[RMDB]
RNA sequence: GGGAACGACUCGAGUAGAGUCGAAAACUUUCCCGAUGGAUCGUUUCGUAUAAUUUUGGUGCAAAAUAGUAGAGAGACGCAGUGUUACUCUUCCUUACGUUACCUGUAUCUGGAGAGUGUCAAGCGUGACAUUCAUAAACUUCGGUUUAUGAAUGUCAAAAGAAACAACAACAACAAC
Reactivity to DMS in 0.01 (KOAc 150mM, MgCl2 10mM, bicine 150mM(pH8.5), 24C), signal-to-noise 4, nucleotides 027 to 126: c210u000u010u000c000c000c010g010a130u020g010g010a040u010c050g010u000u000u000c030g010u000a060u010a060a060u000u000u000u000g000g040u000g030c050a050a030a060a060u000a090g030u010a100g010a140g010a120g010a060c040g010c070a120g000u000g000u010u000a060c010u000c010u000u000c040c120u010u000a030c020g010u000u020a100c250c180u000g000u000a020u010c120u000g010g010a030g000a030g010u000g010u000c050a090a110g010c090g020u000
Reactivity to 2A3 in 0.01 (KOAc 150mM, MgCl2 10mM, bicine 150mM(pH8.5), 24C), signal-to-noise 3, nucleotides 027 to 126: c000u020u030u000c000c000c000g020a180u110g060g050a070u040c020g030u010u060u040c090g010u110a110u050a150a160u070u070u070u130g160g010u140g050c030a020a080a030a080u050a100g080u060a060g030a000g010a010g000a090c020g000c040a050g080u010g040u130u040a020c000u010c000u060u040c010c000u000u030a020c020g110u070u070a090c020c040u060g020u020a030u050c060u030g010g000a020g010a010g000u010g010u030c030a020a010g030c010g040u030
Notes
Source: RMDB library RFMREP, as collected in RNAgym. An RNA of 177 nucleotides, treated with DMS and 2A3 and read out base by base. The reactions ran in a buffer of 150 mM KOAc, 10 mM MgCl2 and 150 mM bicine (pH 8.5), at 24 C. For DMS, 3,995 sequencing reads were counted. 2A3 adducts were read by reverse transcription with SuperScript II with manganese. Values cover nucleotides 27 to 126.